[RMDB]
RNA sequence: GGGAACGACUCGAGUAGAGUCGAAAAUUAGCGGCCCUGCUGGCGAUGCCCGCCGACGCCGAACCGGUGGCCAUCUUGUGCCUGGGGCCGGUGCCCGAGUUUCCGGACCGGCCCGCGCUGGAACUGGCAUGGAAGGCAGGUUCGCCUGCCUUCCAUGAAAAGAAACAACAACAACAAC
Reactivity to DMS in 0.01 (KOAc 150mM, MgCl2 10mM, bicine 150mM(pH8.5), 24C), signal-to-noise 1, nucleotides 027 to 126: u040u030a050g010c030g000g000c030c010c040u000g040c130u000g000g000c110g010a030u000g000c200c000c010g000c030c010g000a140c100g040c010c050g000a090a080c110c000g000g000u020g020g020c150c050a020u000c060u000u000g020u030g020c000c050u010g010g060g000g050c000c000g000g050u000g040c090c000c000g050a120g000u000u020u010c070c110g000g000a060c030c020g000g000c000c000c000g000c050g040c010u010g000g010a090a040c100u000g020g000
Reactivity to 2A3 in 0.01 (KOAc 150mM, MgCl2 10mM, bicine 150mM(pH8.5), 24C), signal-to-noise 1, nucleotides 027 to 126: u190u070a020g040c040g010g010c010c010c000u100g090c100u000g010g000c060g040a070u080g000c000c000c000g020c000c020g000a020c080g070c050c040g060a080a080c020c000g000g060u100g050g030c010c020a050u010c010u110u190g070u120g030c000c060u060g030g020g000g000c010c000g010g000u040g030c020c000c010g000a110g010u030u150u000c020c000g020g010a020c000c000g000g000c000c010c040g000c000g010c000u060g020g020a040a040c030u040g040g000